[RMDB]
RNA sequence: GGGAACGACUCGAGUAGAGUCGAAAAGAAAGAAAGAAAGAUGGGGCAUGAACCUGGCAUACAAUGUAGAUUUCUGUGUUCGUUAGGCAACAGCUACAUUGUCUGCUGGGUUUCAGGCUACCUGGAAAUAGCUAUCUGAAUUCGUUCAGAUAGCUAUAAAAGAAACAACAACAACAAC
Reactivity to DMS in 0.01 (KOAc 150mM, MgCl2 10mM, bicine 150mM(pH8.5), 24C), signal-to-noise 9, nucleotides 027 to 126: g010a110a080a110g010a080a080a090g000a100a070a080g000a120u020g000g000g000g000c020a050u000g000a020a020c010c000u000g000g010c000a010u000a010c000a010a000u000g000u000a000g000a200u030u030u040c050u000g010u000g000u010u020c090g020u020u050a090g010g010c080a050a030c010a020g000c000u000a000c010a010u000u000g000u000c030u000g000c000u010g000g000g000u000u010u010c010a020g000g010c010u000a050c010c000u000g010g010a070a090
Reactivity to 2A3 in 0.01 (KOAc 150mM, MgCl2 10mM, bicine 150mM(pH8.5), 24C), signal-to-noise 9, nucleotides 027 to 126: g080a020a060a010g110a040a090a010g100a050a070a010g120a060u120g000g000g010g000c010a010u010g000a000a000c000c000u000g000g010c000a000u010a000c000a000a000u000g010u000a010g020a140u090u240u060c040u020g040u020g070u100u240c120g110u190u200a140g090g000c040a090a020c000a080g000c000u000a000c000a000u000u000g000u000c000u000g000c000u000g010g000g000u000u010u010c000a000g000g000c000u280a300c000c010u010g000g040a050a170
Structure probing data (DMS and 2A3) for a 177-nucleotide construct. For DMS the reverse transcriptase was MarathonRT. The RNA was probed in 150 mM KOAc, 10 mM MgCl2 and 150 mM bicine (pH 8.5) at 24 C. For 2A3 the reverse transcriptase was SuperScript II with manganese.